[RMDB]
RNA sequence: GGGAACGACUCGAGUAGAGUCGAAAAACGGAUAGAUUCGUCUAUCCGUGCAUCUCAUAACAGACACAGAAAGUCUGCUAAGAUCUCACUUAGAUAAAGAGAAGAGAGUCGAGUUCGCUCGACUCAACAGACAAUUAAAAUUCGUUUUAAUUGUCUGAAAAGAAACAACAACAACAAC
Reactivity to 2A3 in 0.01 (KOAc 150mM, MgCl2 10mM, bicine 150mM(pH8.5), 24C), signal-to-noise 8, nucleotides 027 to 126: a000c010g000g000a000u010a000g030a020u030u050c160g030u000c110u000a000u000c000c000g000u000g000c010a070u000c010u000c010a030u060a110a040c000a010g020a000c010a000c010a080g270a160a150a020g030u000c010u000g010c000u010a020a020g020a100u010c040u010c040a060c020u030u040a030g030a120u160a230a130a010g070a010g020a120a030g110a010g000a000g020u000c010g000a000g000u040u080c180g060c050u000c000g010a000c000u000c000a000a000
Reactivity to DMS in 0.01 (KOAc 150mM, MgCl2 10mM, bicine 150mM(pH8.5), 24C), signal-to-noise 9, nucleotides 027 to 126: a000c010g010g000a010u000a000g000a030u000u010c180g020u000c000u000a000u000c000c000g010u000g010c160a120u000c000u000c010a090u010a080a110c010a000g000a020c010a080c150a200g010a130a140a090g000u000c000u000g000c070u000a010a020g010a060u000c020u000c070a100c050u000u000a050g010a130u010a040a060a080g010a030g000a080a140g000a160g000a020g000u000c000g010a020g010u000u010c200g010c010u000c000g000a010c000u000c000a030a110

About this RNA: Structure probing data (2A3 and DMS) for a 177-nucleotide construct. The reactions ran in a buffer of 150 mM KOAc, 10 mM MgCl2 and 150 mM bicine (pH 8.5), at 24 C. The data come from the RNA Mapping Database (RMDB), library M2PK50. 2A3 adducts were read by reverse transcription with SuperScript II with manganese. For 2A3, 16,938 sequencing reads were counted.